[RMDB]
RNA sequence: GGGAACGACUCGAGUAGAGUCGAAAACUGUGGCUGGGCCUGUCGGCGACUUGUCUGCGUGAGCGCCGGGGCCGAGGAGAACGCUGAGCAGACUGCGCCCGGAGAAGCCCUGCUGCAGCAUCGAAGGACGCGGGUUCGAUUCCCGCCACCUCCACGCCCAAUGUGUUAUCUUCGGAUAACACAUUGGAAAAGAAACAACAACAACAAC
Reactivity to DMS in 0.01 (KOAc 150mM, MgCl2 10mM, bicine 150mM(pH8.5), 24C), signal-to-noise 1, nucleotides 027 to 156: c010u000g030u000g000g000c040u000g000g020g030c000c040u000g010u000c040g010g020c000g030a110c090u010u000g010u020c010u020g020c040g060u000g010a050g040c010g030c030c060g010g050g030g030c050c100g000a070g050g000a240g010a110a050c050g010c010u000g000a220g010c040a070g000a070c030u000g040c020g010c010c020c100g020g030a130g010a050a110g000c000c010c010u000g010c000u000g020c000a050g010c020a090u000c050g000a130a070g010g000a090c060g000c030g010g010g010u000u000c060g000a300u000u000c000c000c010g020c030c000a050c020c010u000c030c010a130c280g010c140
Reactivity to 2A3 in 0.01 (KOAc 150mM, MgCl2 10mM, bicine 150mM(pH8.5), 24C), signal-to-noise 5, nucleotides 027 to 156: c010u000g000u000g020g010c020u020g010g000g020c030c010u120g200u180c020g000g020c020g080a240c130u130u250g010u010c010u010g020c030g030u160g140a010g000c010g030c040c060g050g010g070g020c050c040g010a030g030g030a060g020a110a020c000g000c020u050g040a030g010c000a000g000a010c000u010g000c020g000c010c060c030g080g010a070g020a070a020g010c000c000c010u000g000c000u010g000c000a000g000c010a070u110c050g030a050a030g080g020a030c050g010c000g020g010g010u080u110c030g050a180u040u040c010c000c010g010c000c000a060c000c020u000c010c010a050c020g050c010
Overview:
The record gives the reactivity of an RNA of 207 nucleotides to DMS and 2A3. It was measured as part of the RMDB library RSTRND. The DMS profile rests on 2,542 reads.